About this RNA:
Source: RMDB library M2PK50, as collected in RNAgym. Chemical mapping of a 177-nucleotide RNA with 2A3 and DMS. The reactions ran in a buffer of 150 mM KOAc, 10 mM MgCl2 and 150 mM bicine (pH 8.5), at 24 C. For DMS the reverse transcriptase was MarathonRT.

[RMDB]
RNA sequence: GGGAACGACUCGAGUAGAGUCGAAAAGGCGACAAGUUCGCUUGUCGCCACGGGGUCCACCCUGGAAAGGCUGGAGGUAUUGGAAUGGUCGGGCCGCCAUUCAACGCGGGACAUUCGUGUCCCGCAAAACAAUAUAAGGCUUCGGCCUUAUAUUGUUAAAAGAAACAACAACAACAAC
Reactivity to 2A3 in 0.01 (KOAc 150mM, MgCl2 10mM, bicine 150mM(pH8.5), 24C), signal-to-noise 2, nucleotides 027 to 126: g010g010c010g000a000c010a000a000g010u010u070c180g040c120u010u010g010u000c010g000c010c000a010c010g020g010g010g020u000c000c010a030c010c020c000u060g120g150a170a090a040g040g000c070u040g030g030a030g040g020u120a150u160u300g140g000a000a010u020g000g010u010c010g000g010g000c010c000g010c000c000a000u000u000c010a040a050c090g000c000g000g000g000a010c000a010u010u040c150g050u060g010u020c010c000c000g000c000a000a010
Reactivity to DMS in 0.01 (KOAc 150mM, MgCl2 10mM, bicine 150mM(pH8.5), 24C), signal-to-noise 4, nucleotides 027 to 126: g010g010c000g020a010c000a000a010g000u000u010c200g020c010u000u000g000u000c000g020c010c000a010c140g000g000g010g010u000c010c020a020c270c010c010u000g010g020a120a160a030g010g020c170u010g030g010a020g010g000u000a110u000u010g000g000a030a020u000g000g010u000c020g000g000g000c010c010g000c000c000a010u000u000c010a110a100c180g000c010g010g000g010a020c000a030u000u020c120g010u000g010u000c000c000c010g010c010a000a010